[RMDB]
RNA sequence: GGGAACGACUCGAGUAGAGUCGAAAAUUUAAUCCCAACAAAGGGCCAAGAGGGUCGGCAACUUGGCCCAAGCCCAAAGAGCGAGACUCUAAAGGGAUGAGUCGUUCCCAACUCGCUCACAAUAUAAGGUAGGUUACUUAUUCGUAAGUAACCUACCAAAAGAAACAACAACAACAAC
Reactivity to DMS in 0.01 (KOAc 150mM, MgCl2 10mM, bicine 150mM(pH8.5), 24C), signal-to-noise 2, nucleotides 027 to 126: u030u020u020a170a200u000c000c000c000a090a190c210a040a140a060g050g010g030c000c030a020a050g000a110g000g020g020u010c150g010g000c100a150a050c040u000u000g000g020c000c010c000a040a060g030c010c020c010a040a110a090g000a010g010c020g010a060g010a230c180u020c060u000a000a030a140g000g020g000a130u020g000a020g000u000c010g000u000u010c000c000c020a030a060c020u000c020g040c020u010c030a090c180a080a100u000a110u010a050a100